[RMDB]
Structure probing data (DMS) for a 177-nucleotide construct. For DMS, 1,635 sequencing reads were counted. The reactions ran in a buffer of 150 mM KOAc, 10 mM MgCl2 and 150 mM bicine (pH 8.5), at 24 C.
RNA sequence: GGGAACGACUCGAGUAGAGUCGAAAAGGAAUGUGCUUCGGCACAUUCCAAAAGAAAGGCAGACGGCGAACGCCAAACGCUGACGAACCAAUAUCGAAGGUAAAACCCACCGGUUCGCCGGUGGGAACAUGUAGUUCCUCUUCGGAGGAACUACAUGAAAAGAAACAACAACAACAAC
Reactivity to DMS in 0.01 (KOAc 150mM, MgCl2 10mM, bicine 150mM(pH8.5), 24C), signal-to-noise 2, nucleotides 027 to 126: g030g000a040a010u000g010u000g000c000u000u000c200g010g020c000a000c000a000u000u000c010c000a040a000a110a130g030a050a080a140g010g000c030a010g040a300c200g060g000c030g000a070a080c110g000c010c010a040a090a100c090g010c020u000g000a280c110g020a080a090c030c000a030a070u020a130u000c090g000a090a090g000g000u000a050a060a100a100c000c000c000a010c010c000g000g000u000u020c200g020c010c000g000g010u000g000g000g010a010a000